[RMDB]
RNA sequence: GGGAACGACUCGAGUAGAGUCGAAAAAUAAAGAAGCACGGUUUAACGUGAUAAUUUCUCUCAUAGUAAUCUCGAGAGUAAAUGUACUAGGGAGGUUUGGAGCAAUAGCUAAUCCGUUAAAGUUACCAUUAGGUGUUUUAUCAAAUCUAAUGCUCUGCAUUUCUGUUCAGUUCGCUGAACAGAAAUGAAAAGAAACAACAACAACAAC
Reactivity to DMS in 0.01 (KOAc 150mM, MgCl2 10mM, bicine 150mM(pH8.5), 24C), signal-to-noise 2, nucleotides 027 to 156: a110u000a000a060a150g000a140a120g000c000a020c030g020g030u000u000u010a050a100c010g020u000g000a060u000a060a110u000u000u000c010u000c010u010c030a160u000a120g000u000a100a090u000c060u010c150g020a110g010a160g020u010a020a040a100u010g010u000a060c100u010a140g000g040g010a090g020g040u010u000u000g020g020a080g030c010a050a110u000a080g000c020u010a040a090u000c000c040g010u000u000a030a040a130g000u000u000a050c050c010a080u000u010a050g020g020u020g010u000u000u000u000a230u030c110a080a020a060u010c010u000a010a050u000g000c000u010c010u020g000
Reactivity to 2A3 in 0.01 (KOAc 150mM, MgCl2 10mM, bicine 150mM(pH8.5), 24C), signal-to-noise 3, nucleotides 027 to 156: a000u160a000a050a030g100a090a020g050c010a010c030g000g020u080u160u200a130a010c020g020u010g050a040u050a100a070u000u140u030c020u000c000u000c020a120u020a070g040u040a150a110u100c140u090c150g100a110g000a000g070u060a000a090a070u080g030u050a030c010u030a040g040g010g000a020g050g010u030u080u130g040g010a020g000c020a020a140u030a070g010c030u090a090a030u030c030c020g000u030u050a060a020a000g000u050u160a030c040c020a020u060u080a060g050g010u030g020u020u040u010u100a100u080c060a090a100a000u020c010u100a040a000u010g010c000u000c010u020g000